[RMDB]
RNA sequence: GGGAACGACUCGAGUAGAGUCGAAAAGCACGUCGUUACGACGACGUGCAAGAAAACAAAAGGAGUGGCGACGGCUGGCCACAGUGAAUCAAACAGCCGAAAAGCAUGGUGGUACGCCACCAUGCAAGGAUACGCGGUCAUUCGUGACCGCGUAUCCAAAAGAAACAACAACAACAAC
Reactivity to 2A3 in 0.01 (KOAc 150mM, MgCl2 10mM, bicine 150mM(pH8.5), 24C), signal-to-noise 1, nucleotides 027 to 126: g000c000a000c000g000u000c000g010u010u040a140c300g000a040c000g040a000c000g010u000g000c000a000a000g000a000a030a000a000c110a000a140a000a000g300g050a190g000u000g000g000c030g020a140c000g060g000c000u000g000g000c010c000a000c030a000g080u050g070a030a100u130c000a070a040a030c000a000g040c000c000g040a030a100a000a010g000c000a000u010g000g000u000g020g000u110a030c260g020c070c000a000c000c000a000u000g000c000a000a000